This 207-nucleotide RNA was probed chemically with 2A3. Conditions: 150 mM KOAc, 10 mM MgCl2 and 150 mM bicine (pH 8.5), 24 C. For 2A3, 523 sequencing reads were counted. For 2A3 the reverse transcriptase was SuperScript II with manganese.
RNA sequence: GGGAACGACUCGAGUAGAGUCGAAAAGUGUGCUAUACUAGUAAGGUUGAAUGAAUCAACCCUUGGUGCUUAGCUUCUUUCACCAAGCAUAUUACACGCGGAUAACCGCCAAAGGAUAAAAGAUGAACUGCCCGACGAUUCUUCGGAAUCGUCGGAAGACCCAAAAGUGGUUCGCCACUUUUGGGUCAAAAGAAACAACAACAACAAC
Reactivity to 2A3 in 0.01 (KOAc 150mM, MgCl2 10mM, bicine 150mM(pH8.5), 24C), signal-to-noise 1, nucleotides 027 to 156: g070u030g000u000g090c050u020a010u020a220c020u030a090g130u050a080a130g020g000u000u010g140a170a130u090g080a050a150u100c010a020a000c010c000c000u010u010g000g000u010g040c080u050u030a030g010c000u040u050c000u000u120u040c000a010c010c000a000a000g050c030a020u060a060u220u150a020c080a010c080g030c030g020g040a100u130a210a080c000c000g000c020c020a100a100a000g100g000a010u080a140a140a000a000g100a040u080g040a090a110c020u040g010c030c000c000g000a000c000g000a000u000u000c000u030u040c100g040g010a000a000u000c000g010u000c000g010g000a000a000
Reactivities are given for positions 27 through 156. It was measured as part of the RMDB library M2RFPK.